[RMDB]
RNA sequence: GGGAACGACUCGAGUAGAGUCGAAAAACGAGGUACGCCUCGAAAAUAUGACCGGUGUCAUAGCCUCUAGCACACAGAGGUCGCGGGGGUUCAACUCCCCCCCUUUUCCGAGGGUAUCGGAAACCAAAAAACACAAUUUGGUUCGCCAAAUUGUGAACACAAUCCUAGUGUUCGCACUAGGAUUGUGAAAAGAAACAACAACAACAAC
Reactivity to DMS in 0.01 (KOAc 150mM, MgCl2 10mM, bicine 150mM(pH8.5), 24C), signal-to-noise 1, nucleotides 027 to 156: a150c100g000a050g050g060u010a100c220g020c030c000u010c000g020a000a050a020a050u000a070u010g000a040c040c040g030g040u000g030u000c030a010u000a120g020c050c010u000c000u000a160g030c080a230c100a170c060a050g000a030g010g000u000c030g000c100g000g030g000g060g000u000u020c010a130a300c010u000c010c000c000c000c000c030c030u000u000u000u000c010c010g010a040g000g000g000u000a170u000c000g000g010a020a050a050c070c040a010a040a070a060a050a210c000a000c000a040a000u010u020u000g000g030u000u000c300g040c000c030a000a050a020u000u000g000u000g020a030a050
Reactivity to 2A3 in 0.01 (KOAc 150mM, MgCl2 10mM, bicine 150mM(pH8.5), 24C), signal-to-noise 2, nucleotides 027 to 156: a000c000g000a010g010g010u040a030c130g120c030c000u010c000g030a030a020a010a040u030a030u020g010a010c030c080g110g040u190g020u150c020a020u010a020g000c010c000u000c020u050a080g060c100a020c000a010c030a170g010a020g020g010u000c030g020c040g040g000g000g000g010u030u050c010a020a030c020u010c000c000c000c000c000c000c000u020u110u060u000c010c000g000a000g000g000g040u150a050u010c010g000g000a030a020a010c040c040a020a030a030a060a080a030c010a010c000a000a000u010u000u000g030g000u020u060c140g040c080c000a000a000a000u000u000g000u000g000a010a000